[RMDB]
This 177-nucleotide RNA was probed chemically with 2A3 and DMS. As a SHAPE reagent, 2A3 marks flexible, mostly unpaired nucleotides at the ribose 2'-OH. The 2A3 profile rests on 3,467 reads. Reactivities are rounded to 0.1 and cut off at 0 and 3. The RNA was probed in 150 mM KOAc, 10 mM MgCl2 and 150 mM bicine (pH 8.5) at 24 C. 2A3 adducts were read by reverse transcription with SuperScript II with manganese.
RNA sequence: GGGAACGACUCGAGUAGAGUCGAAAAAGGCGUAAGACGAAGCGUAAGAAGACACACGACUCGACUGCCCGAUAGUAGCGGAUACGAGCAAGCUGUCAAAGCAAAAUCGAGAUUGCACAGCGUACGCGAAUAUAUAUAUAUUCGUAUAUAUAUAUUCAAAAGAAACAACAACAACAAC
Reactivity to 2A3 in 0.01 (KOAc 150mM, MgCl2 10mM, bicine 150mM(pH8.5), 24C), signal-to-noise 5, nucleotides 027 to 126: a000g100g000c020g030u060a050a040g040a050c040g030a090a020g000c010g010u060a040a010g060a090a030g050a060c010a010c000a010c080g220a160c030u020c030g050a060c050u050g000c000c010c000g040a050u040a110g100u040a010g030c020g020g050a060u090a210c020g010a050g030c030a060a060g030c050u020g000u060c030a070a070a040g030c030a030a030a020a100u130c070g020a010g030a170u020u080g020c030a020c040a040g030c020g050u060a020c040g000c010
Reactivity to DMS in 0.01 (KOAc 150mM, MgCl2 10mM, bicine 150mM(pH8.5), 24C), signal-to-noise 4, nucleotides 027 to 126: a030g020g020c020g010u000a060a060g020a110c020g000a080a110g030c060g010u010a050a090g010a170a110g010a090c110a050c090a170c150g010a080c030u000c010g010a070c060u000g010c030c070c110g000a070u030a060g010u030a080g010c010g000g010a100u010a040c070g000a070g010c070a030a080g000c030u010g010u020c100a060a070a130g010c040a030a050a080a100u020c100g000a110g010a130u010u020g010c040a080c050a080g010c040g000u010a040c060g010c090